Chemical mapping of a 177-nucleotide RNA with 2A3 and DMS. Source: RMDB library M2PK90, as collected in RNAgym.
[RMDB]
RNA sequence: GGGAACGACUCGAGUAGAGUCGAAAAAGAAAUUAAGCGUACGAAGAUGGACGUACGCAACCAGUGCGUACAGGAAUCGCACAUCCAGCGCUCUAAGGAGAGCGCAAAACCAAAUAAUAGAAAAAAAGAUAAGGAAGAGGUUCGCCUCUUCCUUAUCAAAAGAAACAACAACAACAAC
Reactivity to 2A3 in 0.01 (KOAc 150mM, MgCl2 10mM, bicine 150mM(pH8.5), 24C), signal-to-noise 2, nucleotides 027 to 126: a000g060a020a010a000u200u150a170a030g000c030g000u030a000c000g060a060a060g130a250u170g080g080a010c000g000u010a010c000g000c010a000a010c030c000a030g010u020g010c020g000u070a030c050a160g040g210a070a040u060c020g000c000a000c010a000u050c030c020a050g000c000g010c010u040c020u080a180a190g190g040a050g300a010g050c000g040c010a000a000a050a020c080c000a080a050a030u250a130a040u230a140g160a040a200a000a000a010a030a000
Reactivity to DMS in 0.01 (KOAc 150mM, MgCl2 10mM, bicine 150mM(pH8.5), 24C), signal-to-noise 1, nucleotides 027 to 126: a130g020a170a020a170u020u010a060a210g030c020g020u020a000c030g000a100a160g000a160u000g000g000a190c020g000u010a000c000g000c000a060a010c090c080a160g020u020g000c000g000u020a220c070a150g070g000a110a200u000c000g000c010a060c000a110u000c040c040a080g000c000g050c000u000c000u000a120a100g000g000a110g000a000g020c010g020c040a020a010a090a100c100c130a010a100a060u000a080a180u040a140g020a000a020a040a080a070a030a090

For 2A3 the reverse transcriptase was SuperScript II with manganese. Conditions: 150 mM KOAc, 10 mM MgCl2 and 150 mM bicine (pH 8.5), 24 C. For 2A3, 1,238 sequencing reads were counted.